This 207-nucleotide RNA was probed chemically with DMS and 2A3. It was measured as part of the RMDB library OK3TST. High DMS reactivity at an A or C suggests that its Watson-Crick edge is free. The reactions ran in a buffer of 150 mM KOAc, 10 mM MgCl2 and 150 mM bicine (pH 8.5), at 24 C.

RNA sequence: GGGAACGACUCGAGUAGAGUCGAAAAUUAUACACUUCCGGCAGAUGUCCAUACCUGCAUACACGUAACGCAAUAGCUCCAGUAGCACCAGGUAGCACCGUAGCGCUAGAUAGUACAUAAUACAGUAUAUAAUGAUGACGUAUUACAUGUACAGGUACGAAGAUAAUAGGUUCGCCUAUUAUCUUCGAAAAGAAACAACAACAACAAC
Reactivity to DMS in 0.01 (KOAc 150mM, MgCl2 10mM, bicine 150mM(pH8.5), 24C), signal-to-noise 4, nucleotides 027 to 156: u000u010a110u000a140c060a130c080u000u000c020c030g030g020c050a090g010a100u000g000u000c060c030a140u010a060c010c020u030g000c020a110u000a070c050a060c070g010u000a090a050c080g010c030a080a100u000a110g020c020u000c010c020a120g020u000a080g020c050a110c030c030a070g020g000u020a080g010c030a190c010c030g020u000a090g010c050g000c030u000a060g000a140u000a070g010u000a020c010a030u000a030a040u000a030c000a130g010u000a200u000a130u010a080a150u010g000a150u010g010a080c050g020u000a010u000u000a010c050a100u000g010u000a020c010a080g030g010u010a160
Reactivity to 2A3 in 0.01 (KOAc 150mM, MgCl2 10mM, bicine 150mM(pH8.5), 24C), signal-to-noise 4, nucleotides 027 to 156: u070u030a070u050a070c040a000c030u030u020c020c000g000g010c030a030g070a140u070g050u000c020c020a040u040a080c010c010u010g040c010a020u090a040c060a000c060g160u150a160a010c060g000c060a010a020u060a150g000c020u030c040c020a010g020u020a000g010c030a030c020c020a000g000g030u010a010g020c020a060c070c030g040u040a020g010c010g000c030u000a010g000a070u070a030g020u010a000c000a000u050a020a010u020a020c040a020g080u000a050u040a010u020a180a220u130g110a050u180g040a000c010g010u000a010u010u040a070c110a060u050g000u000a000c000a020g010g080u060a030